The record gives the reactivity of an RNA of 207 nucleotides to DMS and 2A3. The DMS profile rests on 6,005 reads. DMS adducts were read by reverse transcription with MarathonRT. The RNA was probed in 150 mM KOAc, 10 mM MgCl2 and 150 mM bicine (pH 8.5) at 24 C.
RNA sequence: GGGAACGACUCGAGUAGAGUCGAAAACUAGAGGAAGCUGAAGGAUCAGUCCUGACUGAAGGAUCCUGAAGAGAGUCUCCUUCGAAGGAGAUCGAGACUUCCUGAGAAGAGUCAGCUCUGAUCCUCUGACUAGUCGAAGAGUCGACUCUUCUCUCGAAAGAUACGUCUAGUUCGCUAGACGUAUCUUAAAAGAAACAACAACAACAAC
Reactivity to DMS in 0.01 (KOAc 150mM, MgCl2 10mM, bicine 150mM(pH8.5), 24C), signal-to-noise 3, nucleotides 027 to 156: c030u010a110g010a090g020g010a090a050g040c050u000g000a160a040g010g000a040u000c010a140g010u010c020c030u000g010a300c140u010g010a070a160g020g030a040u000c010c020u010g020a120a090g010a120g000a110g030u010c000u000c000c000u030u010c150g030a200a150g020g000a110g000a090u000c040g000a110g000a110c020u000u000c000c000u010g010a110g000a040a030g000a030g010u000c000a040g000c050u000c000u000g000a210u000c010c000u000c030u000g010a160c120u000a120g010u010c020g000a130a130g000a040g020u010c020g020a030c000u000c000u010u000c010u000c000u010c030g010a210
Reactivity to 2A3 in 0.01 (KOAc 150mM, MgCl2 10mM, bicine 150mM(pH8.5), 24C), signal-to-noise 5, nucleotides 027 to 156: c050u050a040g010a010g080g010a020a000g020c040u080g050a110a010g020g000a030u030c020a030g110u090c030c040u110g080a140c070u140g050a080a060g040g010a030u020c020c020u050g030a090a010g070a010g010a030g090u010c010u000c010c010u100u160c130g070a090a030g010g010a010g000a020u040c030g020a010g040a110c000u010u010c010c020u020g000a010g010a040a020g010a000g010u010c010a010g010c010u010c000u030g070a140u030c020c030u040c040u040g090a120c070u080a030g090u070c030g060a060a000g010a020g070u050c020g000a000c000u000c000u010u000c010u000c000u010c010g090a160